[RMDB]
RNA sequence: GGGAACGACUCGAGUAGAGUCGAAAAGAGCUGACCAACGGGAUUCGUCGAAGCUUAAGGAGAUUGUGAUUACUAUUCGUGAGGCUCACCAGGCUUAUAGAGAAAUUGCAAUGCUUGACGUGAGAGAGGUAAUACUAGGAUUCGUCCUAGUAUUACCAAAAGAAACAACAACAACAAC
Reactivity to 2A3 in 0.01 (KOAc 150mM, MgCl2 10mM, bicine 150mM(pH8.5), 24C), signal-to-noise 7, nucleotides 027 to 126: g030a010g030c050u050g030a050c010c040a050a030c060g100g040g060a150u170u120c020g010u020c030g090a050a010g010c000u080u080a090a050g120g010a090g030a060u040u070g030u040g060a030u040u120a080c040u060a060u070u090c030g030u050g100a040g080g000c010u000c020a050c010c010a010g030g000c010u100u050a050u090a090g090a010g040a060a120a070u090u110g010c010a030a040u080g040c010u010u020g020a050c060g030u060g010a050g000a000g000a020
Reactivity to DMS in 0.01 (KOAc 150mM, MgCl2 10mM, bicine 150mM(pH8.5), 24C), signal-to-noise 9, nucleotides 027 to 126: g010a060g020c030u000g010a150c080c040a160a080c100g000g000g010a120u010u000c050g020u000c030g010a110a070g010c040u000u000a090a120g020g010a080g010a070u000u000g010u010g000a050u000u000a120c050u010a070u000u000c090g010u000g010a210g010g000c060u000c070a060c070c050a050g000g000c010u000u000a040u000a250g000a060g010a050a040a070u000u000g010c040a030a030u000g010c010u000u000g010a090c150g010u000g010a070g000a120g000a110